The record gives the reactivity of an RNA of 177 nucleotides to 2A3 and DMS. For 2A3 the reverse transcriptase was SuperScript II with manganese. For DMS, 3,188 sequencing reads were counted. Values are in units of 0.01, from 0 to 300, in steps of 10. The RNA was probed in 150 mM KOAc, 10 mM MgCl2 and 150 mM bicine (pH 8.5) at 24 C.
[RMDB]
RNA sequence: GGGAACGACUCGAGUAGAGUCGAAAAGAGAACAAUUGCGAAUGGAGGGAAAGAGAUAAUAUCUGGCAUAGUAGGAUGGUUUACAGGAACAGCUAAAAUCAUAAGGUGGACAAUUUGGGCAAUUGGAACAUCCCAAAUACUUCGGUAUUUGGGAUGUAAAAGAAACAACAACAACAAC
Reactivity to 2A3 in 0.01 (KOAc 150mM, MgCl2 10mM, bicine 150mM(pH8.5), 24C), signal-to-noise 2, nucleotides 027 to 126: g070a010g010a080a000c030a040a100u090u090g000c010g070a070a070u070g050g010a050g020g020g040a020a050a040g080a020g070a010u060a040a040u060a040u060c050u060g050g010c040a050u050a090g050u020a020g030g070a060u040g010g040u040u010u060a080c030a030g050g010a090a040c010a020g000c040u080a010a120a040a040u010c020a030u060a170a020g060g030u030g000g070a020c030a010a100u050u050u040g010g000g020c000a010a020u120u070g040g000a040
Reactivity to DMS in 0.01 (KOAc 150mM, MgCl2 10mM, bicine 150mM(pH8.5), 24C), signal-to-noise 4, nucleotides 027 to 126: g000a120g020a140a080c100a070a080u000u010g010c070g010a050a090u000g000g010a100g010g000g000a050a110a100g010a050g000a050u000a030a100u000a290u010c050u000g010g010c060a050u000a060g010u000a050g010g010a040u000g010g000u000u000u000a090c090a060g030g010a050a060c100a060g000c050u010a020a030a060a040u010c090a050u010a060a050g030g020u000g000g020a040c100a040a060u010u010u000g010g000g000c050a030a060u000u000g010g030a120